[RMDB]
RNA sequence: GGGAACGACUCGAGUAGAGUCGAAAAGCGGGACACGUCGUCUGUCUUUAGGUCCAUGCAAGACAGGUUGUCGUCAGCAAAUAGCUUGCCACUUCACGCAGUUUGGAUCAUCGCACCACGUGGAAACAGGAUACCGGAUCUUCGGAUCCGGUAUCCUAAAAGAAACAACAACAACAAC
Reactivity to 2A3 in 0.01 (KOAc 150mM, MgCl2 10mM, bicine 150mM(pH8.5), 24C), signal-to-noise 1, nucleotides 027 to 126: g040c050g000g000g000a000c040a000c050g130u040c020g000u020c000u050g020u030c000u030u100u000a100g000g050u090c050c060a030u120g050c000a020a150g030a030c000a030g000g050u150u270g080u000c000g000u020c100a010g070c060a120a080a080u120a010g030c030u010u020g010c000c000a000c020u150u150c050a000c010g050c070a100g000u000u030u120g080g040a030u060c010a000u030c020g010c050a010c000c000a060c040g010u040g050g000a070a040a040c060
The record gives the reactivity of an RNA of 177 nucleotides to 2A3. For 2A3 the reverse transcriptase was SuperScript II with manganese. The data come from the RNA Mapping Database (RMDB), library OK1LIB. Values cover nucleotides 27 to 126. Conditions: 150 mM KOAc, 10 mM MgCl2 and 150 mM bicine (pH 8.5), 24 C.